The record gives the reactivity of an RNA of 177 nucleotides to 2A3 and DMS. Reactivities are given for positions 27 through 126. The RNA was probed in 150 mM KOAc, 10 mM MgCl2 and 150 mM bicine (pH 8.5) at 24 C. DMS adducts were read by reverse transcription with MarathonRT. For DMS, 5,662 sequencing reads were counted.
RNA sequence: GGGAACGACUCGAGUAGAGUCGAAAAACAGUGAGGCAUACCCAGAGGACUCUGAGAGGCGAUCUGAGUCUGCUUCCAGAAACCAUCAUGGAUCUUCUCGGGAGCAGUCAAGAGAUGGCUCCAGACACAUACCUAGCAGUUUCGACUGCUAGGUAUGAAAAGAAACAACAACAACAAC
Reactivity to 2A3 in 0.01 (KOAc 150mM, MgCl2 10mM, bicine 150mM(pH8.5), 24C), signal-to-noise 5, nucleotides 027 to 126: a000c070a020g100u100g130a060g100g000c030a060u050a140c020c000c010a010g070a070g090g040a060c030u020c010u050g150a210g010a040g300g050c040g050a020u000c010u030g020a010g060u000c010u010g000c000u000u000c000c000a000g000a030a050a040c030c000a050u280c080a100u300g050g000a090u070c070u060u010c030u050c060g000g000g000a000g020c000a000g020u020c010a040a050g040a000g000a130u030g100g010c000u000c010c010a010g020a020c040a000
Reactivity to DMS in 0.01 (KOAc 150mM, MgCl2 10mM, bicine 150mM(pH8.5), 24C), signal-to-noise 5, nucleotides 027 to 126: a070c090a070g010u020g010a060g010g010c040a080u000a120c040c030c020a130g000a130g000g010a120c180u000c010u000g010a140g010a080g010g010c010g000a050u000c010u000g010a300g000u000c000u000g000c000u000u010c000c010a040g000a010a020a030c000c010a130u020c250a130u010g000g010a040u000c100u000u010c000u000c160g050g000g000a000g000c010a010g020u000c010a060a100g000a060g000a050u010g010g010c010u000c020c020a060g000a080c200a160